[RMDB]
RNA sequence: GGGAACGACUCGAGUAGAGUCGAAAACGUCGUGAACUAGCGACAAUGCCGUAGAUCCAUCGUUAUCUAACCGAAACAUCGUGACUAGUCGUAGAAUAGAACCAGGAGCGGGCGCUGUCAAACAAAGACGGGGUCUCAAAUUCGUUUGAGGCCCCGUAAAAGAAACAACAACAACAAC
Reactivity to DMS in 0.01 (KOAc 150mM, MgCl2 10mM, bicine 150mM(pH8.5), 24C), signal-to-noise 2, nucleotides 027 to 126: c170g000u000c090g000u000g010a130a100c120u060a100g010c010g000a010c040a110a040u030g010c040c030g000u000a030g010a060u010c030c010a110u020c060g000u000u010a050u030c030u000a070a130c040c050g010a130a070a060c140a030u020c030g000u020g000a080c020u000a030g000u010c000g000u080a050g010a050a120u000a040g000a060a060c050c020a040g000g000a100g020c060g040g000g000c010g000c040u000g010u000c060a050a070a140c140a060a080a090g020
Reactivity to 2A3 in 0.01 (KOAc 150mM, MgCl2 10mM, bicine 150mM(pH8.5), 24C), signal-to-noise 2, nucleotides 027 to 126: c040g010u020c000g000u020g090a100a150c030u020a040g000c000g000a000c010a000a030u070g010c010c020g050u030a000g000a120u000c030c000a030u020c040g040u000u070a030u000c010u050a050a050c010c040g000a020a060a000c010a060u030c060g020u000g040a030c030u020a010g010u010c030g040u060a000g060a100a020u030a000g030a030a000c020c000a010g000g010a060g010c010g000g000g000c030g010c010u000g030u010c010a090a150a180c020a010a100a040g090